[RMDB]
RNA sequence: GGGAACGACUCGAGUAGAGUCGAAAAUAAACAAAUUGGAUUAUUAUUACCGCUUAGUGGCCGUAAUGGACCUUUGGGUACAAAUAUGAUGCAAGCGGCUAAGCUAGCACUCAGUGAUCCCACUGCACAACUAGACGUGAUUCGUCACGUCUAGUUGAAAAGAAACAACAACAACAAC
Reactivity to 2A3 in 0.01 (KOAc 150mM, MgCl2 10mM, bicine 150mM(pH8.5), 24C), signal-to-noise 3, nucleotides 027 to 126: u050a000a050a040c040a050a100a140u140u110g010g040a030u030u050a020u110u040a040u090u110a170c020c010g000c090u040u070a030g030u090g120g000c020c020g060u080a080a100u080g030g000a020c010c000u050u070u150g150g010g010u030a030c030a000a160a020u170a050u170g070a020u080g050c040a040a050g000c020g020g000c040u040a040a010g040c020u020a020g000c030a030c020u090c000a030g000u000g080a030u010c020c020c000a020c040u080g070c080a030
Reactivity to DMS in 0.01 (KOAc 150mM, MgCl2 10mM, bicine 150mM(pH8.5), 24C), signal-to-noise 4, nucleotides 027 to 126: u010a060a100a100c060a060a070a110u010u010g000g000a160u000u000a030u000u000a070u010u010a080c030c040g010c080u000u000a070g040u000g020g010c060c040g020u000a060a150u000g000g000a000c010c010u000u000u020g040g020g030u000a030c040a030a060a080u010a040u000g010a060u010g010c090a080a060g000c010g000g020c080u010a070a080g000c040u000a040g010c090a100c130u000c030a030g010u000g000a110u000c020c010c020a190c140u010g000c300a140
Source: RMDB library OK2TST, as collected in RNAgym. Chemical mapping of a 177-nucleotide RNA with 2A3 and DMS. For DMS, 2,518 sequencing reads were counted. The RNA was probed in 150 mM KOAc, 10 mM MgCl2 and 150 mM bicine (pH 8.5) at 24 C.